[RMDB]
RNA sequence: GGGAACGACUCGAGUAGAGUCGAAAACGGAACACAGUGAGUGGACGGAAGAAAUCCCCUUCCCACCUCCCCACUGUCCACUCACUGUCUUCCUAAGAGGAAAUAUAAAUCGGGGGUGGGAAGGGGACAUUAGCUGAGCCUUCGGGCUCAGCUAAUGAAAAGAAACAACAACAACAAC
Reactivity to 2A3 in 0.01 (KOAc 150mM, MgCl2 10mM, bicine 150mM(pH8.5), 24C), signal-to-noise 3, nucleotides 027 to 126: c020g010g030a010a000c040a000c000a010g000u000g000a000g000u000g010g000a000c010g000g030a030a050g080a080a170a020u100c000c000c010c000u010u010c000c010c000a000c000c000u020c080c050c010c030a050c020u020g000u000c010c000a000c000u020c030a000c000u000g010u000c000u000u030c000c000u010a070a000g040a070g060g120a040a130a000u300a090u110a010a210a010u270c190g030g000g000g010g000u000g000g010g000a000a000g000g000g000g010a000